[RMDB]
This 177-nucleotide RNA was probed chemically with 2A3 and DMS. It was measured as part of the RMDB library M2PK90.
RNA sequence: GGGAACGACUCGAGUAGAGUCGAAAAUGAACGUGCGUACAUCUCUCUCAGACUGUAGGACAGUCUGACUCUCUCGCACUCUAGUUCCACGAGAGAGAGAGAGCGUUGGAACUAGGGUGAAAUGAAAACCUCAUAUCUUAUUCGUAAGAUAUGAGGUAAAAGAAACAACAACAACAAC
Reactivity to 2A3 in 0.01 (KOAc 150mM, MgCl2 10mM, bicine 150mM(pH8.5), 24C), signal-to-noise 9, nucleotides 027 to 126: u140g010a090a020c060g040u080g060c050g030u090a040c050a150u020c030u010c000u000c000u000c040a000g010a020c010u010g060u110a090g120g300a040c000a000g010u000c000u010g000a010c000u000c000u000c010u020c040g030c020a010c000u010c000u000a000g000u000u000c010c010a020c030g030a050g000a010g000a000g000a010g010a010g010a040g010c030g060u090u090g000g000a000a000c000u000a000g010g000g010u050g060a100a090a050u200g030a040a050a020
Reactivity to DMS in 0.01 (KOAc 150mM, MgCl2 10mM, bicine 150mM(pH8.5), 24C), signal-to-noise 9, nucleotides 027 to 126: u010g010a100a110c100g020u000g010c050g010u000a070c080a100u000c020u000c010u000c040u000c010a040g000a020c010u000g010u000a120g010g060a300c010a010g000u000c000u000g000a030c040u000c010u000c020u000c050g000c040a070c010u000c000u000a010g000u000u000c000c000a050c110g010a050g000a080g010a100g000a050g000a030g000a070g010c080g010u000u000g020g000a010a010c000u000a020g010g000g000u000g000a020a030a060u010g000a070a060a050